[RMDB]
RNA sequence: GGGAACGACUCGAGUAGAGUCGAAAAGACACGACGGAGACGUCGUGUCAAAGAGUGGGAAACCACUCAAAGAGCCACAGCUUCGGCUGUGGCUCAAGGCGCGGCCAUGUCCGCGGAACAAACAAAACAGCCUAUUAAAUUUCGAUUUAAUAGGCUGAAAAGAAACAACAACAACAAC
Reactivity to DMS in 0.01 (KOAc 150mM, MgCl2 10mM, bicine 150mM(pH8.5), 24C), signal-to-noise 2, nucleotides 027 to 126: g010a000c000a000c000g000a020c010g030g000a300g000a200c000g000u000c000g020u000g020u000c000a030a040a090g000a020g030u010g000g000g010a180a100a180c000c000a000c010u010c000a020a090a080g000a020g020c000c000a010c000a000g040c000u000u020c300g020g030c000u020g040u000g000g010c000u010c000a000a030g020g000c020g030c030g010g010c020c220a120u000g000u010c040c010g000c020g010g000a070a110c160a040a090a090c110a090a070a090a200
Reactivity to 2A3 in 0.01 (KOAc 150mM, MgCl2 10mM, bicine 150mM(pH8.5), 24C), signal-to-noise 1, nucleotides 027 to 126: g030a020c010a000c000g000a010c000g040g010a030g000a020c010g000u000c000g000u000g000u000c000a000a020a000g000a000g000u020g000g030g010a000a060a080c000c000a000c000u000c000a030a050a000g000a000g020c020c030a000c000a010g080c040u130u180c300g100g000c010u000g000u010g000g050c020u010c010a000a010g020g030c000g010c000g000g030c010c160a260u240g020u000c020c010g020c000g000g010a060a050c050a000a050a010c010a060a080a000a090